Source: RMDB library RFMREP, as collected in RNAgym. This 177-nucleotide RNA was probed chemically with DMS and 2A3. The RNA was probed in 150 mM KOAc, 10 mM MgCl2 and 150 mM bicine (pH 8.5) at 24 C. For DMS, 1,269 sequencing reads were counted. 2A3 adducts were read by reverse transcription with SuperScript II with manganese. The 2A3 profile rests on 1,800 reads.
[RMDB]
RNA sequence: GGGAACGACUCGAGUAGAGUCGAAAAUCAGCUCUCUUUGCCUUUUGGCUUAGAUCAAGUGUAGUAUCUGUUCUUUUCAGUUUAAUCUCUGAAAGUGUUCUAAGGAACACAACAUUGAUUAAUCUCAGAUAAUGCAUGUGUUCGCACAUGCAUUAUCAAAAGAAACAACAACAACAAC
Reactivity to DMS in 0.01 (KOAc 150mM, MgCl2 10mM, bicine 150mM(pH8.5), 24C), signal-to-noise 2, nucleotides 027 to 126: u000c050a300g010c040u010c110u010c030u000u000u000g000c010c010u010u010u010u010g030g000c010u000u030a030g000a040u000c210a140a050g000u000g030u000a080g020u000a050u010c070u000g020u010u000c010u000u000u010u000c190a030g010u000u000u000a030a000u000c000u000c000u010g010a020a140a140g000u000g000u000u000c000u010a070a190g060g020a000a000c000a000c010a030a300c000a000u000u000g000a030u000u000a020a000u010c030u000c150a130
Reactivity to 2A3 in 0.01 (KOAc 150mM, MgCl2 10mM, bicine 150mM(pH8.5), 24C), signal-to-noise 3, nucleotides 027 to 126: u140c020a000g020c000u020c000u000c000u000u010u020g000c000c010u220u290u090u300g030g010c000u000u020a000g000a030u070c070a070a050g000u020g070u130a130g040u030a100u080c070u080g180u080u060c040u040u050u040u070c000a000g000u010u030u010a030a000u000c000u000c000u020g070a150a150a130g040u010g010u000u020c020u040a120a260g210g000a010a010c000a000c010a000a050c000a010u010u030g020a010u000u040a060a040u040c090u010c030a020